Source information
An RNA of 177 nucleotides, treated with 2A3 and DMS and read out base by base. It was measured as part of the RMDB library OK2TST.
RNA sequence: GGGAACGACUCGAGUAGAGUCGAAAAUGAAUGGGAUAGAAGUAAAGAGUUGAUGCACAGAACCGAAGCCAUAUGCGCAGCAAUGAUUGAAGCUUGGGGUCAUACAGAUCUGUUGCGGGAUAUAAGGACUGAUUUGGUAAUUCGUUACCAAAUCAGUAAAAGAAACAACAACAACAAC
Reactivity to 2A3 in 0.01 (KOAc 150mM, MgCl2 10mM, bicine 150mM(pH8.5), 24C), signal-to-noise 3, nucleotides 027 to 126: u150g050a040a050u060g010g000g010a050u060a100g060a130a000g050u100a050a150a020g090a030g020u070u100g060a050u060g040c020a030c020a040g070a080a010c030c030g050a030a000g000c000c020a020u040a040u130g050c090g000c000a030g020c010a040a120u100g050a100u060u100g060a090a000g020c030u070u070g060g000g000g000u040c000a010u050a130c040a030g070a050u040c010u040g050u050u050g030c000g000g000g030a030u060a010u030a140a040g050g000
Reactivity to DMS in 0.01 (KOAc 150mM, MgCl2 10mM, bicine 150mM(pH8.5), 24C), signal-to-noise 7, nucleotides 027 to 126: u010g010a100a080u000g010g010g010a100u000a050g010a070a070g000u010a060a110a080g010a130g010u000u010g010a080u000g010c040a030c070a070g000a100a100c080c040g000a080a110g010c040c040a060u010a080u010g010c050g010c030a040g000c060a040a060u000g000a100u000u000g010a100a100g010c050u000u000g010g000g010g000u000c050a060u010a070c170a110g000a050u000c040u000g010u000u000g010c060g000g010g000a060u000a070u010a080a100g000g010

For 2A3, 4,711 sequencing reads were counted. High 2A3 reactivity points to a flexible backbone, as in loops and unpaired stretches.